Description:
Source: RMDB library M2RFPK, as collected in RNAgym. Chemical mapping of a 207-nucleotide RNA with 2A3 and DMS. Conditions: 150 mM KOAc, 10 mM MgCl2 and 150 mM bicine (pH 8.5), 24 C. The 2A3 profile rests on 2,374 reads.
RNA sequence: GGGAACGACUCGAGUAGAGUCGAAAAGAAUUGGUAUGUAAGCUACUUCUUCCAGUAGCAGCGUCAUAACAUCAAGGUUAUGCAUACUGAGCCGAAGCUCAGCUUCGGUCCUCCAAGGAAGACCAAAUACAGCUCAGCCCGUUCGCGGGCUGAGCAAGAUCUACAUUAGCUUCGGCUAAUGUAGAUCAAAAGAAACAACAACAACAAC
Reactivity to 2A3 in 0.01 (KOAc 150mM, MgCl2 10mM, bicine 150mM(pH8.5), 24C), signal-to-noise 3, nucleotides 027 to 156: g060a000a070u030u010g000g000u030a000u000g010u010a260a300g000c000u000a000c010u080u080c000u000u000c000c010a000g010u010a000g000c010a000g010c000g000u000c000a000u000a000a000c010a060u220c240a130a060g250g000u000u000a000u000g010c000a000u000a000c000u020g010a000g000c000c000g000a010a000g000c030u080c300a030g010c000u000u010c000g010g000u000c010c010u100c070c030a040a040g000g000a000a000g010a010c010c070a030a050a020u200a120c070a020g000c070u010c010a000g010c000c000c010g030u090u110c160g000c030g080g000g060c000u000g000a000g000c000a000a000
Reactivity to DMS in 0.01 (KOAc 150mM, MgCl2 10mM, bicine 150mM(pH8.5), 24C), signal-to-noise 1, nucleotides 027 to 156: g000a110a150u050u000g020g010u020a010u000g000u000a100a180g010c000u000a000c010u000u010c050u010u010c140c090a300g010u000a080g040c020a000g010c080g020u010c030a020u000a020a050c000a300u000c190a220a080g010g010u000u000a030u000g000c000a090u000a000c000u010g000a170g020c000c010g000a030a040g040c030u010c160a140g020c040u010u000c000g040g040u000c030c040u010c030c080a100a150g070g030a070a050g030a200c100c050a020a040a190u010a030c110a180g040c040u000c000a010g080c020c040c000g060u000u000c200g020c010g000g030g080c000u010g000a000g040c020a010a000